Source: RMDB library OK2TRN, as collected in RNAgym. This 177-nucleotide RNA was probed chemically with DMS and 2A3. Reactivities are given for positions 27 through 126. The RNA was probed in 150 mM KOAc, 10 mM MgCl2 and 150 mM bicine (pH 8.5) at 24 C. For 2A3, 1,308 sequencing reads were counted. DMS adducts were read by reverse transcription with MarathonRT.
[RMDB]
RNA sequence: GGGAACGACUCGAGUAGAGUCGAAAAUUUACAAGCCAGAGCAUGAUGCAAAAUUUCCGCAGCUUCAUAUUAGAAAGGUCUGGAAUAUUGCCAGCAUUAUGCAACGCCAUACCUUCAGACUUUGUGCCUCUAUUCCGGAAUUCGUUCCGGAAUAGAGAAAAGAAACAACAACAACAAC
Reactivity to DMS in 0.01 (KOAc 150mM, MgCl2 10mM, bicine 150mM(pH8.5), 24C), signal-to-noise 2, nucleotides 027 to 126: u000u000u000a090c110a070a150g000c030c040a060g010a200g010c050a050u010g000a010u000g000c030a050a090a070a100u000u000u000c000c020g010c260a080g000c020u000u000c010a090u020a130u010u010a170g000a070a040a030g000g010u000c070u000g000g000a010a050u000a040u000u000g000c110c210a210g000c030a050u000u000a060u020g010c030a110a120c180g000c040c020a040u010a090c130c040u000u010c050a030g000a060c070u000u000u000g000u010g030c130
Reactivity to 2A3 in 0.01 (KOAc 150mM, MgCl2 10mM, bicine 150mM(pH8.5), 24C), signal-to-noise 2, nucleotides 027 to 126: u070u040u080a070c050a030a100g010c010c010a010g010a000g000c010a010u050g010a010u000g060c010a070a030a020a130u050u040u040c010c030g080c060a050g010c020u010u030c060a080u060a250u300u220a080g210a200a060a020g040g050u010c030u110g030g060a020a010u160a050u060u070g040c040c040a020g040c020a000u000u090a010u210g020c020a060a030c010g000c000c000a050u070a070c010c000u050u100c030a000g020a090c000u100u070u080g120u110g080c030